[RMDB]
RNA sequence: GGGAACGACUCGAGUAGAGUCGAAAAGUUGGGGAAUUCGUUCCCCAACACUGAAUAUCUUCCGAAGCCGAACGGGAAAACCGGCAUCUAAAAAUAAAUUAAAGCUCUAUGCUUUCGAGCAUAGAAAAGUACAUAAGGAAUUCGUUCCUUAUGUACUAAAAGAAACAACAACAACAAC
Reactivity to DMS in 0.01 (KOAc 150mM, MgCl2 10mM, bicine 150mM(pH8.5), 24C), signal-to-noise 4, nucleotides 027 to 126: g010u000u000g020g000g000g030a010a020u000u020c180g030u000u000c000c010c000c000a000a000c010a040c180u020g000a100a120u010a140u000c040u000u000c020c000g020a070a110g030c010c020g000a050a060c050g000g010g000a130a020a080a100c300c010g010g010c010a100u010c110u000a020a080a060a090a080u000a070a020a100u020u010a070a080a190g010c180u010c000u000a000u000g010c010u000u000u020c140g000a020g010c010a000u000a010g000a010a030a050
Reactivity to 2A3 in 0.01 (KOAc 150mM, MgCl2 10mM, bicine 150mM(pH8.5), 24C), signal-to-noise 5, nucleotides 027 to 126: g010u000u000g020g010g000g010a010a030u070u030c130g050u060u000c010c000c000c000a000a000c000a000c000u000g010a050a050u090a070u150c040u080u020c010c000g010a070a000g000c000c010g010a020a010c020g070g140g190a090a300a010a100c070c010g010g000c000a020u070c060u160a120a140a090a200a220u140a110a110a050u220u160a200a130a030g020c010u000c000u010a000u000g000c000u090u020u120c230g080a000g000c000a000u010a000g000a000a060a000
Overview: Chemical mapping of a 177-nucleotide RNA with DMS and 2A3. The reactions ran in a buffer of 150 mM KOAc, 10 mM MgCl2 and 150 mM bicine (pH 8.5), at 24 C. It was measured as part of the RMDB library M2PK50.